An RNA of 177 nucleotides, treated with DMS and read out base by base. Values cover nucleotides 27 to 126.
RNA sequence: GGGAACGACUCGAGUAGAGUCGAAAAAAGAGGGUAAUGAUCCAUAUCUUUAGCCACCCAUCGUUGAGCAGCGGACGGUUCGGACAGUUUUGGAUAUUCUUCGAGAGGCAUUUGUCCAGUCUCCUGAUGCACCAUUUGAUUUCGAUCAAAUGGUGCAAAAAGAAACAACAACAACAAC
Reactivity to DMS in 0.01 (KOAc 150mM, MgCl2 10mM, bicine 150mM(pH8.5), 24C), signal-to-noise 1, nucleotides 027 to 126: a090a080g010a070g000g010g000u000a060a090u030g010a050u000c010c000a030u000a020u000c010u000u000u000a170g000c150c150a100c020c020c030a060u010c130g030u000u000g000a090g010c030a040g010c080g000g010a030c140g010g040u010u000c070g010g000a070c070a090g030u000u010u010u000g010g000a040u000a100u010u010c070u000u000c070g010a100g000a070g000g010c030a070u000u010u010g000u000c010c040a210g000u000c020u000c020c070u000g020a170
It was measured as part of the RMDB library OK2TRN. Conditions: 150 mM KOAc, 10 mM MgCl2 and 150 mM bicine (pH 8.5), 24 C.